The data come from the RNA Mapping Database (RMDB), library OK3TST.
Chemical mapping of a 207-nucleotide RNA with 2A3 and DMS.
RNA sequence: GGGAACGACUCGAGUAGAGUCGAAAAGAUGUUCGACGCGUACAUGGCUCGCAUCCUGGCGUUCGAAGGCGGAGAGGGCGCUCACGCCGAGCAAUUCUCGGCCGCGGAGCUCAGGAACUUCGUCGACGCGCUCGACGCGCUGGACCGCAAGGCCGCGAACCUUGUGCUUAUUCGUAAGCACAAGGUUAAAAGAAACAACAACAACAAC
Reactivity to 2A3 in 0.01 (KOAc 150mM, MgCl2 10mM, bicine 150mM(pH8.5), 24C), signal-to-noise 3, nucleotides 027 to 156: g090a080u230g040u070u040c010g000a010c000g000c020g030u040a140c070a210u170g050g000c030u030c110g020c050a060u020c010c010u020g010g010c070g050u020u060c040g030a090a120g020g000c080g030g000a020g020a010g010g100g040c090g010c040u040c010a110c040g180c100c070g020a010g000c030a030a110u130u030c030u030c000g090g020c030c010g000c040g010g010a030g020c050u100c110a020g020g050a090a110c050u160u170c060g020u010c010g010a000c010g000c000g010c040u020c010g010a010c010g000c000g000c050u170g010g030a290c000c000g000c040a040a000g020g000c010c000g000c010g010
Reactivity to DMS in 0.01 (KOAc 150mM, MgCl2 10mM, bicine 150mM(pH8.5), 24C), signal-to-noise 2, nucleotides 027 to 156: g030a080u000g000u010u000c010g050a020c050g000c020g020u000a190c060a160u010g020g020c030u000c080g000c100a100u000c020c000u010g010g040c080g070u010u010c020g000a050a130g030g040c030g030g010a130g020a280g010g000g010c130g020c030u000c050a180c110g040c020c040g050a020g040c060a080a170u000u000c010u010c020g000g020c000c020g010c060g020g010a180g000c010u000c030a140g000g040a070a100c040u000u000c000g010u000c000g010a050c000g020c040g000c000u010c040g040a090c020g000c040g010c050u000g050g020a100c000c050g070c150a130a100g010g020c000c020g000c020g000
Overview:
For 2A3 the reverse transcriptase was SuperScript II with manganese.